[RMDB]
Structure probing data (DMS and 2A3) for a 177-nucleotide construct. For 2A3 the reverse transcriptase was SuperScript II with manganese. Conditions: 150 mM KOAc, 10 mM MgCl2 and 150 mM bicine (pH 8.5), 24 C. For DMS the reverse transcriptase was MarathonRT. Reactivities are rounded to 0.1 and cut off at 0 and 3.
RNA sequence: GGGAACGACUCGAGUAGAGUCGAAAAGAUAUGGAAUGCCUCAACUCCGAUAAGCGACUAGUCGGAAACGACUAUCGCUUUUGACGGAGGAGGCAUUCCUAAGUCAAAAGCAGGCUUCGGCCUGCAAUCUUCUGUCAAAGUUCGCUUUGACAGAAGAAAAAGAAACAACAACAACAAC
Reactivity to DMS in 0.01 (KOAc 150mM, MgCl2 10mM, bicine 150mM(pH8.5), 24C), signal-to-noise 3, nucleotides 027 to 126: g010a020u000a300u010g000g010a030a000u000g000c000c010u000c010a150a200c020u000c000c010g030a170u010a020a010g000c000g020a020c300u000a010g000u000c000g010g000a070a090a110c000g010a020c000u000a020u000c010g000c000u020u000u000u000g030a140c100g000g010a030g040g000a010g000g020c000a010u010u000c000c000u020a000a040g000u000c050a130a070a120a110g010c000a020g000g000c010u000u010c250g020g010c010c030u000g020c030a030a020
Reactivity to 2A3 in 0.01 (KOAc 150mM, MgCl2 10mM, bicine 150mM(pH8.5), 24C), signal-to-noise 2, nucleotides 027 to 126: g010a000u030a000u090g000g010a000a000u010g000c000c000u140c140a300a300c080u010c030c050g120a190u100a300a030g030c000g020a030c300u030a020g010u000c020g000g050a000a080a000c010g010a000c000u000a010u020c010g020c000u010u010u010u020g030a040c040g000g000a000g010g000a000g000g000c000a000u000u000c000c000u000a020a020g010u010c000a000a060a080a060g000c010a020g020g000c020u070u300c300g160g010c020c000u000g000c000a000a000